An RNA of 177 nucleotides, treated with 2A3 and read out base by base. Source: RMDB library RFM100, as collected in RNAgym. For 2A3, 512 sequencing reads were counted. The RNA was probed in 150 mM KOAc, 10 mM MgCl2 and 150 mM bicine (pH 8.5) at 24 C.
[RMDB]
RNA sequence: GGGAACGACUCGAGUAGAGUCGAAAAGAUUAGAGGCCUUGGGGUUGAAACAACCUUAACCUAUUCUCAAACUUUAAAUAUGUAAGAAGCCCUUGUUACUUAAGUGAACGUGGGCAUUAGAAUGGAUCCGAUGACAUGUAUUCGUACAUGUCAUCGGAAAAGAAACAACAACAACAAC
Reactivity to 2A3 in 0.01 (KOAc 150mM, MgCl2 10mM, bicine 150mM(pH8.5), 24C), signal-to-noise 1, nucleotides 027 to 126: g000a030u090u110a130g000a030g220g000c050c080u020u020g000g000g000g000u070u000g060a230a040a000c060a080a000c000c000u000u000a000a000c000c000u000a020u000u000c040u000c050a150a150a000c040u230u300u300a050a030a030u300a060u300g030u150a100a070g030a000a060g100c000c000c000u070u040g080u150u100a170c010u030u060a030a090g230u160g160a000a000c000g000u000g000g000g030c030a030u000u080a120g000a000a060u010g080g060a050u000